[RMDB]
RNA sequence: GGGAACGACUCGAGUAGAGUCGAAAAGAUGGGUUCGCCCAUCAGGAGUGGGGUCUUCUCGCGCUCGUUUGACGGGGAGCUCUGAAGCCUCCACGGAGCAUCGAUCCCGAGAGCGCCGAGAAGACGGAGGCACCCUCAGCGUACGAUUCGUCGUAAAGCCUCUGUUUUACUUCGGUAAAACAGAGGCAAAAGAAACAACAACAACAAC
Reactivity to 2A3 in 0.01 (KOAc 150mM, MgCl2 10mM, bicine 150mM(pH8.5), 24C), signal-to-noise 1, nucleotides 027 to 156: g020a000u080g000g090g000u090u090c180g070c070c000c000a000u000c000a000g040g030a010g070u210g000g000g000g000u000c000u000u000c000u000c000g000c000g060c000u030c020g040u170u300u260g160a050c000g050g000g000g000a010g000c000u040c000u000g010a000a010g000c000c020u000c010c000a020c020g010g000a000g030c030a260u090c010g180a170u140c040c000c000g000a000g000a000g020c030g000c060c160g010a000g000a000a000g000a000c000g230g000a000g000g000c000a030c000c000c010u050c060a090g030c010g140u090a040c010g000a060u200u010c080g080u050c040g020u300a050a120a060